[RMDB]
RNA sequence: GGGAACGACUCGAGUAGAGUCGAAAAGAUAUGGAUUUGUAUGGGAGACGUACAUCGGAAACGAUGUAUACGUCAUCGAUCAUGUCAAAUCCUAAGUCAAAGACCAGUCUCUUCGGAGACUGGUCAACUUAAGAUCGCAGUUCGCUGCGAUCUUAAGAAAAGAAACAACAACAACAAC
Reactivity to DMS in 0.01 (KOAc 150mM, MgCl2 10mM, bicine 150mM(pH8.5), 24C), signal-to-noise 2, nucleotides 027 to 126: g000a000u010a030u010g000g010a010u000u000u000g000u000a020u000g000g000g000a010g040a000c020g030u000a000c000a000u000c000g000g000a020a010a040c000g010a020u000g010u000a040u000a050c050g030u000c000a300u000c300g010a010u010c000a000u000g000u000c010a010a010a010u000c010c000u000a000a050g000u000c010a130a090a110g000a010c010c010a010g030u000c000u000c000u000u020c230g060g010a020g010a000c010u000g000g010u000c010a010a040
Reactivity to 2A3 in 0.01 (KOAc 150mM, MgCl2 10mM, bicine 150mM(pH8.5), 24C), signal-to-noise 1, nucleotides 027 to 126: g000a000u010a010u070g010g000a010u010u040u030g000u050a010u010g000g100g010a120g000a010c000g000u010a000c000a000u000c010g040g000a030a010a000c010g000a000u020g060u010a100u050a000c030g000u030c020a000u190c020g010a030u030c000a010u010g300u200c030a010a010a000u020c020c000u000a010a000g020u000c030a250a090a060g000a010c000c010a040g000u030c020u000c000u020u200c300g210g010a040g000a000c010u000g000g000u010c010a000a000
Structure probing data (DMS and 2A3) for a 177-nucleotide construct. 2A3 adducts were read by reverse transcription with SuperScript II with manganese. The RNA was probed in 150 mM KOAc, 10 mM MgCl2 and 150 mM bicine (pH 8.5) at 24 C. DMS (dimethyl sulfate) methylates the pairing face of unpaired adenines and cytosines. For DMS, 3,218 sequencing reads were counted.